RNA sequence: GGGAACGACUCGAGUAGAGUCGAAAAGAAUCAAUCUCGGUAUCGUUGACGGCGGCCUGCCGCAGGAUCUCUUGCACGUCGCCCGAGUUGUCCUGGUAGGCGAUCUCGGUCAUGAACUGCUCGAUCUCCUCCUCCUGAAGGUCUCCGCGACCGGCGCCGUGUAGCAAGUAUUCGUACUUGCUACACGAAAAGAAACAACAACAACAAC
Reactivity to DMS in 0.01 (KOAc 150mM, MgCl2 10mM, bicine 150mM(pH8.5), 24C), signal-to-noise 1, nucleotides 027 to 156: g000a090a120u000c060a080a130u000c020u000c020g010g030u020a030u010c120g000u010u020g010a110c000g020g000c040g030g000c000c040u000g030c020c070g070c060a050g010g000a070u010c050u010c030u000u010g010c020a070c090g100u000c030g000c100c000c000g010a060g030u010u000g050u010c020c040u010g070g010u010a070g060g030c000g000a020u020c000u000c030g000g010u000c030a190u010g010a080a150c080u000g000c030u000c070g020a070u000c050u000c020c040u000c020c020u020c040c030u000g020a120a050g020g000u010c010u010c060c060g000c050g000a100c040c020g000g000c040g000c050
Reactivity to 2A3 in 0.01 (KOAc 150mM, MgCl2 10mM, bicine 150mM(pH8.5), 24C), signal-to-noise 3, nucleotides 027 to 156: g070a010a090u230c060a050a040u090c010u010c070g080g000u130a120u170c060g050u030u160g070a080c010g010g030c010g010g040c030c030u070g030c100c050g030c020a010g000g080a070u010c070u020c010u070u070g020c070a040c160g030u010c010g000c000c000c040g010a010g000u010u060g050u050c020c010u060g100g090u200a040g010g060c010g010a090u040c060u030c040g030g000u040c070a120u220g060a140a040c000u020g000c030u020c090g020a050u030c020u030c030c010u000c000c030u080c010c060u070g080a070a010g030g000u000c000u000c040c110g060c070g090a020c000c040g050g010c030g020c000
Structure probing data (DMS and 2A3) for a 207-nucleotide construct. The RNA was probed in 150 mM KOAc, 10 mM MgCl2 and 150 mM bicine (pH 8.5) at 24 C. 2A3 is a SHAPE reagent: it acylates the 2'-hydroxyl of flexible nucleotides of all four kinds.